The data come from the RNA Mapping Database (RMDB), library OK1LIB. The record gives the reactivity of an RNA of 177 nucleotides to 2A3. The RNA was probed in 150 mM KOAc, 10 mM MgCl2 and 150 mM bicine (pH 8.5) at 24 C. Values cover nucleotides 27 to 126. The 2A3 profile rests on 375 reads. 2A3 adducts were read by reverse transcription with SuperScript II with manganese.

[RMDB]
RNA sequence: GGGAACGACUCGAGUAGAGUCGAAAAAUUAUGGAGGAUGUCUUGUUUGAAGGAGACACGUGGAGGCUCUCCCGAGCCGUUUCACGCAUUUCACGGGCUUUUGGAGAGUCAAAAGACGUUGAAUUAGCACCGCCCGUACAUUCGUGUACGGGCGGUGAAAAGAAACAACAACAACAAC
Reactivity to 2A3 in 0.01 (KOAc 150mM, MgCl2 10mM, bicine 150mM(pH8.5), 24C), signal-to-noise 2, nucleotides 027 to 126: a000u270u260a280u100g240g000a030g130g000a100u000g010u000c010u160u130g250u300u280u220g110a120a030g180g000a000g000a000c010a000c000g000u110g010g040a210g000g000c000u020c000u010c000c020c020g000a000g000c000c000g000u000u000u000c020a010c000g000c000a070u000u000u120c000a000c060g110g000g110c090u130u140u000u040g030g000a100g000a000g120u300c000a000a000a000a000g000a040c010g000u000u190g030a190a070u010u000a100g070